[RMDB]
RNA sequence: GGGAACGACUCGAGUAGAGUCGAAAAUAAUCCAAAGGGAUGUCCCGACCGGAGGCCGACAAUCCAGGGAACCGGAUGUCAUCACGUUGUUGCAGUACCAGAUGGCAUCUUAAAUCCGAUCUGCAAAAAAAGUCUUACACCUUCGGGUGUAAGACAACAGUGAUAAUAGGUUCGCCUAUUAUCACUGAAAAGAAACAACAACAACAAC
Reactivity to DMS in 0.01 (KOAc 150mM, MgCl2 10mM, bicine 150mM(pH8.5), 24C), signal-to-noise 2, nucleotides 027 to 156: u020a090a110u010c040c000a060a150a150g010g020g010a090u000g010u000c020c010c010g000a110c030c010g010g000a090g000g010c100c010g010a120c090a100a140u010c050c010a150g020g040g030a180a060c090c100g000g010a020u000g010u000c000a050u000c020a230c160g000u000u000g020u000u000g010c000a120g010u000a060c110c080a080g010a040u020g010g000c000a020u000c000u000u000a080a080a100u010c030c020g020a090u020c040u000g010c060a000a000a080a070a120a100a130g030u000c000u000u000a030c000a010c000c010u000u010c300g020g010g040u000g010u000a000a030g000a010c000a000a020
Reactivity to 2A3 in 0.01 (KOAc 150mM, MgCl2 10mM, bicine 150mM(pH8.5), 24C), signal-to-noise 2, nucleotides 027 to 156: u080a000a050u040c010c030a050a130a020g090g000g000a030u020g050u030c010c010c010g010a020c010c030g060g000a010g040g030c050c020g150a140c080a100a070u060c060c040a040g040g000g010a020a030c030c030g000g000a000u000g020u020c000a010u010c000a010c160g060u100u070g070u080u070g010c010a020g000u030a090c030c070a090g000a000u000g000g010c010a000u000c000u020u070a060a090a020u060c060c020g020a070u030c010u000g000c000a030a070a010a040a040a040a020g000u010c000u000u000a000c000a000c000c010u020u090c180g120g000g000u000g000u000a000a000g000a000c000a000a000
This 207-nucleotide RNA was probed chemically with DMS and 2A3. For DMS, 4,025 sequencing reads were counted. For 2A3 the reverse transcriptase was SuperScript II with manganese. The RNA was probed in 150 mM KOAc, 10 mM MgCl2 and 150 mM bicine (pH 8.5) at 24 C. Source: RMDB library M2RFPK, as collected in RNAgym. Reactivities are given for positions 27 through 156.